This 177-nucleotide RNA was probed chemically with 2A3 and DMS. The reactions ran in a buffer of 150 mM KOAc, 10 mM MgCl2 and 150 mM bicine (pH 8.5), at 24 C. For DMS the reverse transcriptase was MarathonRT. The 2A3 profile rests on 876 reads. It was measured as part of the RMDB library RFMREP. For 2A3 the reverse transcriptase was SuperScript II with manganese.
[RMDB]
RNA sequence: GGGAACGACUCGAGUAGAGUCGAAAAAUGCGCUUCCAAUAGUAGAAGGACGUUAAGCAUUUAUCAUUGAACUAUAAUUGUUCAUUGAAGUCAUUGAUGCAAACUCCUUGGUCACACACACAUACGGCAGUUGCUUUACGUUCGCGUAAAGCAACUGAAAAGAAACAACAACAACAAC
Reactivity to 2A3 in 0.01 (KOAc 150mM, MgCl2 10mM, bicine 150mM(pH8.5), 24C), signal-to-noise 1, nucleotides 027 to 126: a010u060g010c070g000c080u020u010c010c000a090a040u070a080g250u020a010g070a120a030g030g030a000c130g030u030u030a100a050g030c000a010u050u030u050a110u000c030a040u030u000g010a000a010c030u030a040u160a300a220u270u140g000u020u000c010a000u020u030g000a030a040g040u110c020a080u060u220g000a000u060g080c050a100a010a060c000u030c000c040u000u000g010g040u100c040a010c000a030c000a000c010a020c000a070u050a070c000g060g000
Reactivity to DMS in 0.01 (KOAc 150mM, MgCl2 10mM, bicine 150mM(pH8.5), 24C), signal-to-noise 1, nucleotides 027 to 126: a080u000g020c070g010c020u000u010c000c020a110a180u010a140g010u010a130g030a030a020g010g000a060c240g040u000u000a150a160g000c000a010u000u000u020a100u010c000a010u000u000g010a030a000c000u000a090u000a070a130u020u010g020u000u000c000a000u010u000g000a030a080g010u000c250a100u000u000g000a000u000g010c010a110a050a070c020u000c000c010u000u000g010g010u010c040a020c050a080c030a070c110a050c130a090u000a050c160g000g000